RNA sequence: GGGAACGACUCGAGUAGAGUCGAAAAGUUGCUCACACCCGUCGCGCACAUUUCAUGGACGAUGGCACCAAGAUAAUGAUUGCACAGUGCCGGAAUAUUUAUUGCUCUGCGACAUUUGAAGCGAGUGCUCCCAAUUCAUCUUCGGAUGAAUUGGGAGAAAAGAAACAACAACAACAAC
Reactivity to 2A3 in 0.01 (KOAc 150mM, MgCl2 10mM, bicine 150mM(pH8.5), 24C), signal-to-noise 1, nucleotides 027 to 126: g020u030u080g020c000u050c000a010c060a050c030c110c210g080u020c010g000c000g000c010a000c030a130u020u090u100c070a040u070g000g040a000c010g070a050u040g000g000c000a010c000c050a140a030g100a060u190a100a140u200g150a100u250u230g020c060a040c000a040g060u080g000c000c000g000g060a060a060u180a030u050u190u090a070u000u100g050c030u040c080u150g030c000g000a030c020a010u100u060u110g080a090a000g000c010g030a000g110u030g030
Reactivity to DMS in 0.01 (KOAc 150mM, MgCl2 10mM, bicine 150mM(pH8.5), 24C), signal-to-noise 2, nucleotides 027 to 126: g010u000u010g000c000u000c080a140c070a100c110c060c020g070u000c070g040c010g040c200a100c050a090u000u010u010c110a090u000g020g000a110c050g010a140u010g000g000c000a060c040c070a080a130g000a090u010a080a100u000g000a110u000u020g000c010a030c110a090g050u000g010c000c040g000g020a060a080u000a050u000u000u020a070u010u020g020c020u010c080u000g000c010g000a060c030a140u000u000u000g030a140a120g040c050g010a040g020u000g000